[RMDB]
RNA sequence: GGGAACGACUCGAGUAGAGUCGAAAAUUCAGCAGAAAUUGUGGACAUGCAUAUCAUGUGCCCAAAUCACCCUUGUGGAGUUAAAAACUAAAUUAAAAUUGAAGUCCAGCGUCAUGGGUGAUAAUCAUGAGCUAUGUAUGUUCGCAUACAUAGCUCAAAAAGAAACAACAACAACAAC
Reactivity to 2A3 in 0.01 (KOAc 150mM, MgCl2 10mM, bicine 150mM(pH8.5), 24C), signal-to-noise 3, nucleotides 027 to 126: u020u050c060a040g000c010a000g110a040a120a050u080u040g050u090g000g020a000c010a010u000g020c040a050u030a050u300c020a030u020g020u130g090c010c000c000a060a180a000u000c000a000c000c000c000u000u090g030u020g000g050a070g050u080u090a000a140a040a100a000c080u050a060a060a020u300u160a040a110a060a010u010u060g030a050a000g070u000c060c020a030g010c020g130u110c110a080u060g030g000g000u000g000a000u030a020a090u090c060a050
Reactivity to DMS in 0.01 (KOAc 150mM, MgCl2 10mM, bicine 150mM(pH8.5), 24C), signal-to-noise 4, nucleotides 027 to 126: u010u040c040a130g010c110a070g010a040a110a110u020u000g000u040g000g000a030c010a000u000g000c200a090u070a090u030c040a020u020g010u000g000c020c020c030a010a090a040u020c000a000c000c010c010u000u010g020u000g010g000a060g000u030u010a060a060a030a100a140c110u060a060a080a140u050u030a040a050a040a120u010u020g000a120a080g030u000c010c000a040g010c120g050u050c060a000u000g000g010g010u010g000a000u000a060a060u020c160a090

The record gives the reactivity of an RNA of 177 nucleotides to 2A3 and DMS. It was measured as part of the RMDB library OK1LIB. For DMS, 6,026 sequencing reads were counted. Values cover nucleotides 27 to 126. High 2A3 reactivity points to a flexible backbone, as in loops and unpaired stretches.